[RMDB]
RNA sequence: GGGAACGACUCGAGUAGAGUCGAAAAGGGGUCCCAGGUCUCCCUUGGAUUUAGUUAACUUUUGACGAACUGAAGCCUCCACGGUUCGAUAAGUUAACUUGUCAGGGAGGCCUGGGACGGAGGCACCCAAACUCCGAGCGCUUCGGCGCUCGGAGAAGUACCGGAUAAGAUUCGUCUUAUCCGGUACAAAAGAAACAACAACAACAAC
Reactivity to 2A3 in 0.01 (KOAc 150mM, MgCl2 10mM, bicine 150mM(pH8.5), 24C), signal-to-noise 1, nucleotides 027 to 156: g070g000g050g000u010c010c000c000a010g000g000u010c000u000c050c010c010u070u140g200g020a070u300u300u120a000g000u010u000a020a020c010u000u060u160u300g150a100c050g010a000a000c010u020g070a130a030g090c000c000u000c020c050a030c090g030g010u000u000c000g030a040u020a110a000g010u010u010a000a000c030u000u050g030u040c030a000g000g000g000a010g010g000c000c000u000g000g040g000a000c030g000g000a030g000g000c070a070c000c000c000a000a060a090c000u000c000c000g000a020g010c270g000c160u300u300c300g110g000c030g000c040u000c010g070g000a020g000a010a010
Structure probing data (2A3) for a 207-nucleotide construct. 2A3 adducts were read by reverse transcription with SuperScript II with manganese. The reactions ran in a buffer of 150 mM KOAc, 10 mM MgCl2 and 150 mM bicine (pH 8.5), at 24 C.